[RMDB]
RNA sequence: GGGAACGACUCGAGUAGAGUCGAAAAUCGCUCGUUGUGGUAGUGAGAUGAAAAGAGGCGGCGCUUACUACCGAUUCCGCCUAGUUGGUCACUUCGACGUAUCGUCUGGAACUCCAACCAUCGCAGGCAUUGCUCAAAGGUUCGCCUUUGAGCAAUGAAAAGAAACAACAACAACAAC
Reactivity to DMS in 0.01 (KOAc 150mM, MgCl2 10mM, bicine 150mM(pH8.5), 24C), signal-to-noise 4, nucleotides 027 to 126: u010c090g030c040u000c060g020u010u000g020u010g010g010u000a030g010u000g000a030g020a190u010g000a060a040a090a140g010a060g000g010c020g000g000c110g000c020u000u000a020c030u000a040c060c020g000a150u010u010c010c020g020c010c010u010a060g020u000u010g010g010u010c120a140c130u000u000c100g000a040c040g000u010a090u010c090g010u000c020u010g040g010a030a080c080u010c030c030a050a050c010c040a040u000c090g020c110a070g020g000
Reactivity to 2A3 in 0.01 (KOAc 150mM, MgCl2 10mM, bicine 150mM(pH8.5), 24C), signal-to-noise 1, nucleotides 027 to 126: u080c010g010c050u050c050g160u100u130g130u100g060g000u000a030g040u050g070a060g020a110u160g100a100a090a100a000g110a020g060g030c030g000g000c010g000c060u010u050a060c010u010a040c000c040g000a090u090u000c000c000g000c020c000u000a040g020u030u050g000g000u030c010a050c060u080u040c030g020a030c000g070u140a130u300c080g020u000c020u010g030g040a010a000c030u000c010c000a020a010c020c020a030u080c010g030c080a000g120g050